[RMDB]
RNA sequence: GGGAACGACUCGAGUAGAGUCGAAAAAGCCACCGCUACGGCGGUGGCAAGUAGAAAAGUUGGUGCUUAGACCACGCCCUCUACCGUAAUAAUAGAUAAAUGGGCGAGUAUCAGUACGCUGAUACAAAAAACACUCACACGUUCGCGUGUGAGUGAACAUAACUCCACCCUUCGGGGUGGAGUUAUGAAAAGAAACAACAACAACAAC
Reactivity to 2A3 in 0.01 (KOAc 150mM, MgCl2 10mM, bicine 150mM(pH8.5), 24C), signal-to-noise 1, nucleotides 027 to 156: a010g010c020c000a000c010c020g050c010u040a010c150g240g040c010g080g000u000g000g010c020a010a020g000u000a000g000a020a000a010a030g020u040u030g000g020u110g030c180u140u140a040g030a060c000c000a000c030g010c000c020c000u030c010u030a030c000c030g030u000a080a060u060a190a010u040a230g110a080u100a120a110a160u220g020g000g010c010g000a000g000u000a010u000c000a000g020u060a010c240g000c110u010g000a010u060a020c050a000a110a000a000a000a000c040a000c000u040c000a050c000a020c000g010u070u100c300g010c000g100u000g000u010g000a000g000u000g000a000a010